[RMDB]
RNA sequence: GGGAACGACUCGAGUAGAGUCGAAAAGCUCUGGAAUUGAGGCCCCUCUAACAAUAAUCCAAAACUACUUCGCAGAGUAAUAUGCCGAAUCGUAGGAUGCCCAUUACUAUCUAUUUUUGGAGCAUCUAAAACUGUCAGUGCUUCGGCACUGACAGAACCUAUUUACAGGGUUCGCCCUGUAAAUAGGAAAAGAAACAACAACAACAAC
Reactivity to 2A3 in 0.01 (KOAc 150mM, MgCl2 10mM, bicine 150mM(pH8.5), 24C), signal-to-noise 3, nucleotides 027 to 156: g020c000u020c010u020g070g070a130a080u110u090g040a060g060g090c040c020c000c000u090c060u080a070a080c040a100a130u140a060a050u130c070c040a030a050a060a060c040u080a050c020u050u040c030g010c070a000g040a000g120u070a060a110u130a060u180g050c020c030g020a020a070u080c020g010u060a040g080g000a000u000g000c010c000c000a010u030u030a030c040u060a060u190c030u050a260u090u050u000u000u010g000g010a170g000c010a000u010c000u010a020a030a010a060c000u000g000u010c000a010g020u000g010c010u030u040c100g060g000c000a000c000u000g010a000c000a000g000a000a000
Reactivity to DMS in 0.01 (KOAc 150mM, MgCl2 10mM, bicine 150mM(pH8.5), 24C), signal-to-noise 1, nucleotides 027 to 156: g010c010u000c020u010g010g000a070a070u000u000g010a130g010g030c010c040c010c010u000c030u020a240a120c090a170a090u000a120a130u000c040c030a040a050a140a050c030u000a070c060u020u000c070g080c070a090g010a120g010u010a080a110u010a050u010g000c020c030g010a060a140u010c000g040u030a180g010g000a010u010g020c030c000c030a070u000u000a070c120u010a070u000c160u010a150u000u000u000u000u000g000g000a190g050c000a030u000c030u010a010a050a070a110c000u000g000u000c010a030g050u010g040c020u010u000c300g020g000c040a000c030u000g010a000c000a020g030a030a090
The record gives the reactivity of an RNA of 207 nucleotides to 2A3 and DMS. Source: RMDB library M2RFOK, as collected in RNAgym. The reactions ran in a buffer of 150 mM KOAc, 10 mM MgCl2 and 150 mM bicine (pH 8.5), at 24 C. For 2A3 the reverse transcriptase was SuperScript II with manganese. Reactivities are given for positions 27 through 156.